[RMDB]
RNA sequence: GGGAACGACUCGAGUAGAGUCGAAAAGAAUCAGUGGCGAAAGUAUGAGGCCCAAAGUCCCAGCGUCAACCCAGCGGAUCGUAAAUACAAUUGGCACGAUUACAACUGUCACCUGUGCGGCAUUACGAUAUUAUCGAACCUUCGGGUUCGAUAAUAUAAAAGAAACAACAACAACAAC
Reactivity to 2A3 in 0.01 (KOAc 150mM, MgCl2 10mM, bicine 150mM(pH8.5), 24C), signal-to-noise 1, nucleotides 027 to 126: g020a030a020u080c040a020g000u030g100g000c020g010a140a010a000g050u100a140u110g050a040g040g070c090c010c030a000a060a010g050u060c000c010c010a010g000c010g020u030c010a000a040c010c010c010a010g040c020g030g000a030u010c020g000u050a020a110a040u200a090c070a010a100u080u090g040g060c040a020c090g090a040u020u090a070c060a120a040c040u040g000u060c030a020c080c020u080g030u110g030c010g060g000c000a000u020u100a020c030g000
Reactivity to DMS in 0.01 (KOAc 150mM, MgCl2 10mM, bicine 150mM(pH8.5), 24C), signal-to-noise 4, nucleotides 027 to 126: g020a140a050u000c070a070g050u000g020g020c030g010a100a080a180g020u000a060u000g010a130g010g020c030c010c070a050a080a140g010u000c030c010c020a090g010c080g010u000c060a060a090c020c020c030a110g010c070g010g010a030u000c040g000u000a050a110a090u010a060c130a070a130u010u010g000g010c040a030c060g000a060u010u010a070c120a050a120c110u000g000u000c030a050c040c060u000g020u000g010c050g000g010c090a070u000u010a060c180g010